[RMDB]
RNA sequence: GGGAACGACUCGAGUAGAGUCGAAAAUUAAAGCCAUUCGUGGCUUUAAACUCUGGUGUCCCGAAAAGCCUCGUGCGCGAUCCCACGCGAACCAGUUUUCGAUUAAGGAUAAGUUCGCUUAUCCUAAGUUUACUUGCCUAUUCGUAGGCAAGUAAACAAAAGAAACAACAACAACAAC
Reactivity to 2A3 in 0.01 (KOAc 150mM, MgCl2 10mM, bicine 150mM(pH8.5), 24C), signal-to-noise 1, nucleotides 027 to 126: u020u000a010a010a010g000c020c000a000u070u020c240g140u040g030g010c060u000u010u020a000a020a010c020u000c020u030g140g020u040g070u060c000c020c000g030a150a110a010a000g050c060c000u040c020g080u080g040c010g000c010g020a040u010c010c020c020a010c020g030c000g010a030a030c000c000a010g030u010u040u040u160c140g030a120u190u140a110a030g030g000a000u010a020a010g000u030u090c230g000c130u000u010a000u010c000c010u000a020a020
Reactivity to DMS in 0.01 (KOAc 150mM, MgCl2 10mM, bicine 150mM(pH8.5), 24C), signal-to-noise 3, nucleotides 027 to 126: u010u000a000a000a000g010c010c000a040u010u010c160g040u000g020g010c010u010u010u000a010a020a130c130u010c060u000g000g020u000g010u010c030c010c010g010a090a090a120a120g000c040c040u000c070g000u000g020c020g030c030g000a090u000c010c020c000a180c050g000c020g010a080a090c030c120a050g000u010u000u010u000c080g000a130u000u010a110a010g020g000a010u010a000a020g000u010u010c220g020c000u000u000a000u000c010c010u000a030a050